RNA sequence: GGGAACGACUCGAGUAGAGUCGAAAAAGCAGUCGAUUCGUCGACUGCUAAUGGGUCGGGACUACAUCACACGUUCUUCGCUAGCCCUCUUUGGACCAGUAAAAAAGAGCUUAUUCGUAAGCUCUAAGAUCCUAGAGAGUUUCGACUCUCUAGGAUCAAAAGAAACAACAACAACAAC
Reactivity to DMS in 0.01 (KOAc 150mM, MgCl2 10mM, bicine 150mM(pH8.5), 24C), signal-to-noise 3, nucleotides 027 to 126: a020g020c000a000g010u000c010g010a030u000u020c180g020u000c000g000a010c000u000g000c000u000a010a030u010g010g000g020u010c060g000g030g010a220c050u000a070c070a050u010c080a060c130a110c080g000u010u000c030u010u020c090g010c040u000a060g000c020c010c010u000c170u000u000u010g000g020a050c040c030a060g010u010a010a040a070a060a070a010g000a020g000c000u010u000a020u000u010c200g000u010a010a010g000c000u000c000u000a030a050